[RMDB]
RNA sequence: GGGAACGACUCGAGUAGAGUCGAAAAGAUAUGGAUAUUGAACUACAUCUACGCGCUCUUGGACCUCGGAAACGAGCUAGAGCCUGUAGAUGCAAUAUCCUAAGUCAAAUCUCACUUCGGUGAGAAAGAUAAAAGAUAUGUUCGCAUAUCUUUUAUCAAAAGAAACAACAACAACAAC
Reactivity to DMS in 0.01 (KOAc 150mM, MgCl2 10mM, bicine 150mM(pH8.5), 24C), signal-to-noise 7, nucleotides 027 to 126: g010a030u000a300u000g000g000a000u000a000u000u000g000a080a050c080u010a300c010a010u000c000u000a010c010g020c300g010c000u000c000u000u000g020g010a100c300c010u000c000g000g000a090a070a120c010g010a020g000c030u000a010g000a010g010c000c020u000g010u000a000g000a000u000g010c000a010a000u000a000u000c000c000u000a040a120g010u010c040a070a100a150u000c000u000c000a010c000u000u010c160g030g000u000g000a010g000a030a070a080
Reactivity to 2A3 in 0.01 (KOAc 150mM, MgCl2 10mM, bicine 150mM(pH8.5), 24C), signal-to-noise 6, nucleotides 027 to 126: g040a020u090a030u160g000g000a000u010a010u030u020g020a080a060c080u140a040c300a010u000c000u010a000c020g050c010g010c020u010c010u030u130g160g110a300c040c020u000c000g020g040a070a100a050c010g010a000g020c020u010a000g000a000g000c020c000u030g010u010a000g010a000u000g000c010a000a000u000a000u000c000c010u010a100a010g000u010c010a060a060a210u010c000u010c000a010c000u040u110c280g100g000u010g000a000g030a070a030a010
An RNA of 177 nucleotides, treated with DMS and 2A3 and read out base by base. Source: RMDB library TTRDEL, as collected in RNAgym. The reactions ran in a buffer of 150 mM KOAc, 10 mM MgCl2 and 150 mM bicine (pH 8.5), at 24 C. DMS adducts were read by reverse transcription with MarathonRT.